[RMDB]
RNA sequence: GGGAACGACUCGAGUAGAGUCGAAAAGACAUCUGAACCCAGUGGUAAUCCUUCGCCGUCAGCGGUUUGGGUUUGAAUUAAUACCGCAUAGCCAGUCAAUGUUUCGAAUUUCACUCUCACGGCGGCCCCAUUGGGCCAAUUUCGAUUGGCCCAAUGGAAAAGAAACAACAACAACAAC
Reactivity to 2A3 in 0.01 (KOAc 150mM, MgCl2 10mM, bicine 150mM(pH8.5), 24C), signal-to-noise 2, nucleotides 027 to 126: g030a000c030a040u030c040u150g080a090a100c040c000c000a040g030u050g070g050u100a100a060u090c020c000u050u130c030g020c020c000g060u020c070a050g000c030g170g000u020u050u070g070g000g000u040u000u060g050a020a010u100u040a060a020u090a170c000c000g010c040a090u090a050g050c050c000a000g040u000c040a060a110u080g000u010u040u030c000g040a030a010u030u150u200c020a020c010u050c020u020c030a010c020g000g010c030g040g000c070c010
Reactivity to DMS in 0.01 (KOAc 150mM, MgCl2 10mM, bicine 150mM(pH8.5), 24C), signal-to-noise 3, nucleotides 027 to 126: g010a150c050a050u000c050u000g030a100a090c040c060c020a100g010u000g020g000u000a090a110u010c040c020u000u010c110g020c010c010g020u000c090a090g020c080g020g000u000u010u010g010g010g010u000u000u000g000a050a060u000u010a050a100u000a040c010c010g010c010a090u000a140g020c090c050a050g020u000c050a060a050u010g010u010u010u000c050g010a030a070u010u000u010c040a050c040u000c020u010c070a110c060g010g010c020g000g000c100c190
This 177-nucleotide RNA was probed chemically with 2A3 and DMS. It was measured as part of the RMDB library OK2TST. The RNA was probed in 150 mM KOAc, 10 mM MgCl2 and 150 mM bicine (pH 8.5) at 24 C. For DMS the reverse transcriptase was MarathonRT.